Chemical mapping of a 207-nucleotide RNA with 2A3 and DMS. The reactions ran in a buffer of 150 mM KOAc, 10 mM MgCl2 and 150 mM bicine (pH 8.5), at 24 C. For 2A3, 1,617 sequencing reads were counted. It was measured as part of the RMDB library M2RFPK.
RNA sequence: GGGAACGACUCGAGUAGAGUCGAAAAGCACAAGACUUCGAACAUUAUAGCAGUUAGUAGUUGCCUAAACCCAUUGCAAUAUAUGGGACAGUAAAGGUCGCAAGCCUAUACUGUGCGGUGAACAUUCAAAAGGGAUGGUACUUCGGUACCAUCCCAAGUGCAAAUAUUACUUCGGUAAUAUUUGCACAAAAGAAACAACAACAACAAC
Reactivity to 2A3 in 0.01 (KOAc 150mM, MgCl2 10mM, bicine 150mM(pH8.5), 24C), signal-to-noise 3, nucleotides 027 to 156: g050c020a010c010a110a030g070a070c080u080u130c160g070a110a040c030a150u150u120a090u210a110g050c030a020g030u040u120a030g030u100a010g020u060u050g040c000c010u080a110a090a060c010c000c000a000u000u020g000c010a020a000u030a010u000a000u140g010g000g020a000c000a010g010u010a000a110a030g030g020u090c030g030c230a020a030g020c010c000u040a050u010a030c010u000g020u020g040c030g030g000u120g070a070a020c010a070u160u300c150a150a080a080a050g030g000g000a000u010g000g000u000a000c010u020u040c090g090g000u000a000c010c000a000u000c000c010c010a000a000
Reactivity to DMS in 0.01 (KOAc 150mM, MgCl2 10mM, bicine 150mM(pH8.5), 24C), signal-to-noise 2, nucleotides 027 to 156: g020c000a070c010a070a070g010a080c020u000u000c030g030a060a110c120a050u000u000a120u010a080g010c070a060g030u000u000a110g030u000a110g000u010u000g000c000c050u010a160a070a220c000c000c000a030u000u000g000c090a120a160u000a120u000a020u000g000g000g040a090c030a070g020u000a040a060a050g010g010u000c050g020c300a150a270g000c010c010u000a110u010a020c000u000g010u010g030c010g040g000u000g020a090a160c070a090u000u000c060a060a110a120a210g010g010g010a000u000g010g000u000a010c000u010u000c300g060g000u000a000c000c000a000u000c000c000c010a010a030
Reactivities are given for positions 27 through 156.